[RMDB]
RNA sequence: GGGAACGACUCGAGUAGAGUCGAAAACUACAAUGAUGACACUCAUAUUUUGUUACCUAUUUUUUCUGGCAUCUCUAAUGCUAGAGCAGCGACGUUUAAGUACUUUCCUGCUCGAUGAAUAUAAACAAAUUUUGUGAAGAUUCGUCUUCACAAAAUUAAAAGAAACAACAACAACAAC
Reactivity to DMS in 0.01 (KOAc 150mM, MgCl2 10mM, bicine 150mM(pH8.5), 24C), signal-to-noise 7, nucleotides 027 to 126: c090u000a070c150a060a050u020g010a050u000g000a150c110a090c120u010c050a070u010a080u030u000u010u010g000u010u010a110c050c040u010a030u000u020u030u000u010u010c030u010g020g010c020a010u010c180u020c150u020a080a050u010g020c020u000a090g010a010g000c010a010g000c120g020a010c300g000u000u000u010a030a110g000u010a020c020u000u010u000c100c010u000g010c000u000c000g010a120u010g000a030a020u010a080u020a060a020a060c150a040
Reactivity to 2A3 in 0.01 (KOAc 150mM, MgCl2 10mM, bicine 150mM(pH8.5), 24C), signal-to-noise 7, nucleotides 027 to 126: c040u140a040c060a040a100u090g060a050u100g040a040c010a020c110u070c040a060u040a160u110u130u060u050g070u040u040a100c010c010u060a200u060u170u020u000u010u050c030u040g030g000c010a030u010c060u010c040u300a140a020u050g010c010u020a020g000a000g000c000a000g010c020g040a010c020g010u000u050u090a150a100g220u060a050c010u130u110u040c000c000u000g000c010u000c000g000a030u090g010a050a010u110a040u060a110a080a010c060a000